This 177-nucleotide RNA was probed chemically with DMS. DMS adducts were read by reverse transcription with MarathonRT. Values cover nucleotides 27 to 126.
[RMDB]
RNA sequence: GGGAACGACUCGAGUAGAGUCGAAAAGGCAGGGUGCGGUUCACCACCGGCACCAUGCGCAUAGAGGAUGACCGGCGCACGAUCACGGUCCCGGUGAUCGGGCCGCUGCGGGCCAAGGAGAACACCCAACGGUCCAAAGUUUCGACUUUGGACCGUUAAAAGAAACAACAACAACAAC
Reactivity to DMS in 0.01 (KOAc 150mM, MgCl2 10mM, bicine 150mM(pH8.5), 24C), signal-to-noise 2, nucleotides 027 to 126: g010g010c020a010g000g030g020u000g010c020g000g010u000u000c300a130c300c160a130c000c010g040g070c010a010c010c010a040u000g000c000g020c160a060u000a070g000a130g000g000a090u000g010a070c070c000g000g010c020g000c020a070c040g010a050u000c030a010c020g020g000u020c010c020c000g000g000u010g000a010u000c010g010g060g000c070c110g000c060u000g000c090g020g010g010c040c020a080a100g010g000a110g010a090a040c120a140c000c040c000